[RMDB]
RNA sequence: GGGAACGACUCGAGUAGAGUCGAAAAGUAAACAGGUUGAGUAGAGUGUGAGCCGCUGCGAUACCAGCUCGAUUACGAGCCCUUGGCAGCGCGUCGGAAGGACCGGUCCCUGAAUAUAAAAAAGUAAUGAGAUAACCGUAUUCGUACGGUUAUCUCAAAAAGAAACAACAACAACAAC
Reactivity to DMS in 0.01 (KOAc 150mM, MgCl2 10mM, bicine 150mM(pH8.5), 24C), signal-to-noise 1, nucleotides 027 to 126: g010u000a060a070a080c070a060g000g000u000u000g000a040g000u000a110g030a110g000u000g000u010g000a080g020c040c020g010c030u000g010c000g010a040u010a090c100c190a300g000c010u000c010g000a300u000u010a110c050g010a000g000c020c060c100u000u000g010g010c070a010g020c000g020c030g000u000c020g000g020a140a090g010g000a000c040c030g000g000u020c010c000c010u000g000a070a040u000a090u010a000a040a050a090a060a100g000u010a030a100